An RNA of 177 nucleotides, treated with DMS and 2A3 and read out base by base.
RNA sequence: GGGAACGACUCGAGUAGAGUCGAAAAGGUUCGUUCGCGAACCAAAAUCGGGGAUCAUCAUGUCACGAGAUACCACUGUGCACUUGUGACAGAUUGAUAACUGAAAAAACCGAAAGUUCGCUUUCGGCCCAUUGAUAACCUUCGGGUUAUCAAUGGGAAAAGAAACAACAACAACAAC
Reactivity to DMS in 0.01 (KOAc 150mM, MgCl2 10mM, bicine 150mM(pH8.5), 24C), signal-to-noise 1, nucleotides 027 to 126: g010g000u010u000c000g050u000u020c220g060c010g010a030a010c000c000a040a020a120a080u010c000g000g000g000g000a030u000c020a000u000c030a090u020g010u010c000a000c020g000a020g020a140u010a130c040c020a210c240u010g000u000g030c070a040c000u010u000g000u000g000a000c000a000g000a010u000u000g020a000u000a000a030c000u060g010a000a100a100a030a130a220c000c000g010a010a010a010g000u000u040c300g020c010u000u000u000c010g000g010
Reactivity to 2A3 in 0.01 (KOAc 150mM, MgCl2 10mM, bicine 150mM(pH8.5), 24C), signal-to-noise 2, nucleotides 027 to 126: g020g010u020u000c020g010u050u080c210g020c030g090a020a000c020c010a000a000a060a040u060c000g030g020g000g000a000u000c010a010u000c070a100u000g000u000c010a000c020g010a000g010a020u120a150c000c050a160c240u210g170u240g030c080a020c060u000u020g000u010g000a010c000a000g020a000u010u030g000a000u000a010a010c040u050g010a050a020a010a000a060a090c010c010g030a000a000a000g030u100u210c260g000c180u000u000u000c000g020g000
Overview:
2A3 adducts were read by reverse transcription with SuperScript II with manganese. The 2A3 profile rests on 1,863 reads. As a SHAPE reagent, 2A3 marks flexible, mostly unpaired nucleotides at the ribose 2'-OH. Source: RMDB library RFMREP, as collected in RNAgym.